[RMDB]
RNA sequence: GGGAACGACUCGAGUAGAGUCGAAAAGAUAUGGAUGUGUGUACCAGCAACAGCUCGGAAACGAGACAUGCUGAGUACCACAUCCUAAGUCAAAAGCUGAACUCUACGUUCGCGUAGAGUUCAGCAACCAUUGGCAGAGGUUCGCCUCUGCCAAUGGAAAAGAAACAACAACAACAAC
Reactivity to 2A3 in 0.01 (KOAc 150mM, MgCl2 10mM, bicine 150mM(pH8.5), 24C), signal-to-noise 1, nucleotides 027 to 126: g030a020u120a040u190g010g020a000u010g000u020g170u090g000u040a010c020c000a010g000c010a020a100c060a240g030c010u010c010g050g000a060a040a040c010g010a010g030a040c050a040u070g000c000u030g000a090g060u000a000c000c000a010c000a000u000c000c000u000a040a020g030u000c060a050a030a010a120g000c000u000g010a000a000c000u000c000u030a000c000g060u040u110c300g000c020g100u000a000g000a000g000u000u000c000a010g010c020a000a000
Reactivity to DMS in 0.01 (KOAc 150mM, MgCl2 10mM, bicine 150mM(pH8.5), 24C), signal-to-noise 2, nucleotides 027 to 126: g010a010u010a300u000g000g010a010u010g010u000g000u020g070u030a000c000c000a040g050c000a040a060c240a270g010c000u000c020g040g010a090a150a150c000g000a020g010a030c150a200u000g000c000u000g000a140g010u000a010c010c010a010c000a000u000c000c000u000a020a080g000u000c040a060a070a110a080g010c000u010g000a010a000c000u000c000u020a000c000g000u000u020c190g020c020g020u000a000g000a000g000u000u000c000a020g000c000a010a030
The data come from the RNA Mapping Database (RMDB), library TTRDEL. An RNA of 177 nucleotides, treated with 2A3 and DMS and read out base by base. The 2A3 profile rests on 3,347 reads.